[RMDB]
RNA sequence: GGGAACGACUCGAGUAGAGUCGAAAAAUAAACCGGAAGCGACGCAGCAAGCCCGACCGGAAGGGCAACCGGAAUGCGUAUCUCAACUCGCCCGACACGCACCUGAGAGACGGGAAUGCGUAAAAAAGGAAUCUUACAGAUUCGUCUGUAAGAUUCCAAAAGAAACAACAACAACAAC
Reactivity to 2A3 in 0.01 (KOAc 150mM, MgCl2 10mM, bicine 150mM(pH8.5), 24C), signal-to-noise 1, nucleotides 027 to 126: a000u090a020a020a060c010c000g040g000a100a030g040c020g060a020c040g010c020a030g020c030a080a020g020c000c030c010g020a070c040c000g050g000a020a050g060g000g000c000a000a020c000c000g000g000a020a040u040g040c030g030u030a080u020c090u010c050a020a080c020u000c060g040c010c000c010g050a040c040a020c120g000c000a020c020c000u070g010a140g010a030g040a170c070g050g000g000a090a180u090g000c010g010u140a120a070a000a000a000a000
Reactivity to DMS in 0.01 (KOAc 150mM, MgCl2 10mM, bicine 150mM(pH8.5), 24C), signal-to-noise 2, nucleotides 027 to 126: a070u010a040a060a260c040c020g000g010a130a140g020c130g000a030c060g000c020a050g000c060a120a100g000c020c020c010g000a280c020c020g000g010a090a060g000g010g000c010a110a090c020c030g000g010a110a080u000g010c010g000u000a040u000c060u000c080a030a060c150u000c110g030c000c030c000g030a060c140a030c060g020c010a030c020c040u000g010a120g010a100g000a130c110g000g000g000a030a080u010g030c030g010u000a000a010a080a050a040a070